[RMDB]
RNA sequence: GGGAACGACUCGAGUAGAGUCGAAAAGACGCCUGUGUGGCGAACCGAGCAAUGGCAUAAGCCGCAAUAGAAGAUGAGAUGGAAGCGGCAAGAUAGAAUGCUCGCAAGUAGAUCCAUCUCACAGAGAGAUAUUUUAUGGUUUCGACCAUAAAAUAUCAAAAGAAACAACAACAACAAC
Reactivity to 2A3 in 0.01 (KOAc 150mM, MgCl2 10mM, bicine 150mM(pH8.5), 24C), signal-to-noise 9, nucleotides 027 to 126: g110a010c030g060c010c010u190g070u080g100u190g160g000c010g010a040a020c020c010g010a020g040c070a060a250u260g100g000c040a080u080a250a030g000c010c010g010c010a020a110u090a120g130a160a010g100a230u030g000a000g000a000u000g010g010a100a030g010c000g020g000c000a010a000g040a000u130a050g160a160a090u060g010c050u100c110g000c030a090a060g040u100a030g060a110u000c000c000a000u000c000u000c000a000c000a000g120a000g010a000
Reactivity to DMS in 0.01 (KOAc 150mM, MgCl2 10mM, bicine 150mM(pH8.5), 24C), signal-to-noise 6, nucleotides 027 to 126: g020a160c080g010c000c010u010g010u020g020u040g010g010c010g010a120a170c050c020g000a140g020c120a100a070u020g020g010c110a140u020a120a140g010c000c010g030c080a150a080u050a050g000a120a120g000a140u010g000a020g000a000u000g020g000a040a140g010c010g000g000c010a040a070g010a120u050a130g010a130a120u020g010c000u050c010g020c060a110a100g020u030a090g010a180u000c000c000a010u000c000u000c000a000c070a090g000a160g010a120
Chemical mapping of a 177-nucleotide RNA with 2A3 and DMS. The DMS profile rests on 11,410 reads. Values cover nucleotides 27 to 126. High DMS reactivity at an A or C suggests that its Watson-Crick edge is free. Conditions: 150 mM KOAc, 10 mM MgCl2 and 150 mM bicine (pH 8.5), 24 C.